[RMDB]
RNA sequence: GGGAACGACUCGAGUAGAGUCGAAAAGGGAUGUAUGGCGAUGUGGCCAUCGUCGUGUAUUCCGGACAGUACGUGGAAAACGGCGUCAAAAAGAACUUCCUGCCGGACAACACGAUGGUGCUGGGGAAGUUUGAAACCGAUUCGUCGGUUUCAAACUAAAAGAAACAACAACAACAAC
Reactivity to DMS in 0.01 (KOAc 150mM, MgCl2 10mM, bicine 150mM(pH8.5), 24C), signal-to-noise 3, nucleotides 027 to 126: g010g010g000a060u000g010u000a050u000g000g010c040g000a020u000g020u020g020g000c230c010a040u000c030g050u010c010g000u000g000u000a070u010u000c000c000g000g020a120c110a100g010u000a090c070g020u000g010g010a080a050a060a140c050g000g000c100g000u020c110a040a070a090a100a090g000a100a060c050u000u020c080c000u010g020c030c030g000g000a060c110a080a040c020a030c050g000a060u000g000g020u000g000c070u010g020g000g000g010a140
Reactivity to 2A3 in 0.01 (KOAc 150mM, MgCl2 10mM, bicine 150mM(pH8.5), 24C), signal-to-noise 1, nucleotides 027 to 126: g040g000g020a040u050g020u090a040u010g020g000c040g020a030u080g080u170g210g020c110c000a000u000c000g020u000c010g000u010g000u000a130u000u060c000c000g000g000a000c010a020g080u150a050c030g010u050g030g130a060a090a030a050c020g020g040c050g070u110c050a110a060a040a000a050g090a030a030c060u080u040c010c010u050g020c020c000g000g000a010c030a060a000c020a030c020g010a010u050g040g070u070g000c040u050g000g000g000g020a000